This 207-nucleotide RNA was probed chemically with DMS. The reactions ran in a buffer of 150 mM KOAc, 10 mM MgCl2 and 150 mM bicine (pH 8.5), at 24 C. Reactivities are given for positions 27 through 156. Source: RMDB library M2RFPK, as collected in RNAgym.

RNA sequence: GGGAACGACUCGAGUAGAGUCGAAAAGCAUAAUUGCCAAUGAUGAGCAAUUCGCUAUUGCCGCCUAAAAACGGUUAGCCGGGGCUGCUAGAGCCUUGUUACCAAAGAUAGCCGGCGGGGACUUCGGAAAAGAGGCCAAAGUUCGCUUUGGCCUCAAGACGUAAAAACAGUUCGCUGUUUUUACGUCAAAAGAAACAACAACAACAAC
Reactivity to DMS in 0.01 (KOAc 150mM, MgCl2 10mM, bicine 150mM(pH8.5), 24C), signal-to-noise 2, nucleotides 027 to 156: g040c040a070u000a020a030u000u000g020c000c030a050a180u010g000a210u000g000a180g020c020a010a020u010u000c150g020c000u000a080u010u000g010c000c010g050c010c000u020a070a070a070a090a090c050g020g000u000u000a040g000c020c010g050g010g000g030c040u000g010c080u010a120g010a080g020c020c020u000u000g010u000u000a110c060c030a080a090a090g010a180u000a080g030c000c060g020g000c050g020g000g040g000a080c070u010u010c040g000g000a110a080a070a180g000a030g020g010c040c000a010a010a020g010u000u010c300g000c000u020u000u000g010g010c000c000u000c000a020a040